[RMDB]
RNA sequence: GGGAACGACUCGAGUAGAGUCGAAAACUGUAAUCCAGUCACUUGGAGGCUUGGGUUGGAGGACGGCGUGAGAUUGGGAGCCCUGUGGCGCUCUGCCCUAUGUCGAUCGGGCGUCCGCGCUAAGCUCGGCGUCAAUAUGGACAUCCCGGGGGAGCUUAGAAUCUCAUAAGUUCGCUUAUGAGAUUCUAAAAGAAACAACAACAACAAC
Reactivity to 2A3 in 0.01 (KOAc 150mM, MgCl2 10mM, bicine 150mM(pH8.5), 24C), signal-to-noise 1, nucleotides 027 to 156: c020u000g070u150a000a070u010c070c020a000g040u090c060a000c090u070u190g060g080a000g020g020c030u100u060g010g020g040u020u080g010g000a010g000g020a020c050g020g070c030g040u100g030a050g010a090u070u100g030g000g040a030g010c040c050c050u070g080u150g030g020c040g000c020u010c030u060g110c000c010c000u050a050u050g140u070c030g080a100u120c050g000g000g000c000g020u020c020c000g000c010g020c020u160a110a000g010c000u020c020g000g050c020g010u000c050a030a060u070a070u210g020g000a000c000a030u050c020c060c030g010g000g010g000g010a020g000c000u010u020